[RMDB]
RNA sequence: GGGAACGACUCGAGUAGAGUCGAAAAAAUUGCAGGAACUUAAUUUGGGGAAAUGGCUGUUAGAUCACACUUAUGAAGAUGGAGUCUUGACUAGAAAAGGUGUAACGAGGCUCUCGUUGGCUGAUUUACUUAACUGUGCCGAUGAAAGUAAUUGGAACAUAUGUAACAGAUUCGUCUGUUACAUAUGAAAAGAAACAACAACAACAAC
Reactivity to DMS in 0.01 (KOAc 150mM, MgCl2 10mM, bicine 150mM(pH8.5), 24C), signal-to-noise 3, nucleotides 027 to 156: a080a070u000u000g020c020a100g040g020a070a060c040u000u010a050a110u010u000u010g020g040g030g010a070a080a100u010g010g010c020u010g010u000u000a080g020a090u000c060a060c070a070c060u010u000a100u000g010a070a080g000a070u000g020g010a120g020u010c040u000u010g020a120c060u010a100g010a070a040a070a090g020g030u000g010u010a060a100c050g010a120g030g020c010u000c030u010c070g030u000u000g020g010c030u010g010a100u000u020u000a090c080u000u010a060a100c080u000g020u000g030c020c020g020a050u010g000a060a050a060g020u000a060a090u010u000g020g010a070a200
Reactivity to 2A3 in 0.01 (KOAc 150mM, MgCl2 10mM, bicine 150mM(pH8.5), 24C), signal-to-noise 5, nucleotides 027 to 156: a000a000u130u090g010c020a020g010g040a060a010c010u080u080a090a100u130u080u100g010g000g000g000a010a050a070u070g030g000c030u020g040u080u050a030g010a060u060c020a000c000a010c080u090u070a080u210g060a070a030g030a060u100g010g020a010g010u000c010u050u050g030a070c050u030a030g110a060a080a040a020g040g000u050g000u040a040a020c030g010a010g070g000c010u000c010u020c040g050u020u020g010g000c010u010g020a070u040u070u110a060c020u040u050a070a030c020u050g050u070g090c030c030g020a040u070g030a010a030a020g040u070a060a100u060u050g040g010a050a010